An RNA of 207 nucleotides, treated with 2A3 and read out base by base. Values cover nucleotides 27 to 156.

RNA sequence: GGGAACGACUCGAGUAGAGUCGAAAACGCUGGGAUCGAUGGUAGGCAAGGCAUGUACUGAAGCGCGCACGGUACUGCUGAUGACCCGAGAGUAGAUCCUGUGCUGAAGCGCGCACGGCAACCGAAAGGUGCGAUGGGUCAGACUUCGGUCUGACAACCUGAGGGAAAGCUUCGGCUUUCCCUCAGGAAAAGAAACAACAACAACAAC
Reactivity to 2A3 in 0.01 (KOAc 150mM, MgCl2 10mM, bicine 150mM(pH8.5), 24C), signal-to-noise 2, nucleotides 027 to 156: c040g000c010u050g000g010g010a000u000c040g020a110u040g190g200u230a140g060g020c010a040a000g010g000c000a030u240g000u030a000c000u000g060a280a060g020c040g000c020g000c090a050c000g000g000u000a000c000u000g000c020u040g020a170u260g020a030c000c010c030g060a100g010a030g070u060a020g020a010u030c020c000u000g000u010g060c030u110g020a060a020g020c010g000c010g020c010a000c020g090g010c080a150a100c050c000g040a090a000a120g000g000u050g010c010g030a090u240g280g010g000u000c000a000g000a000c010u010u040c200g080g010u000c010u010g010a000c000a000a060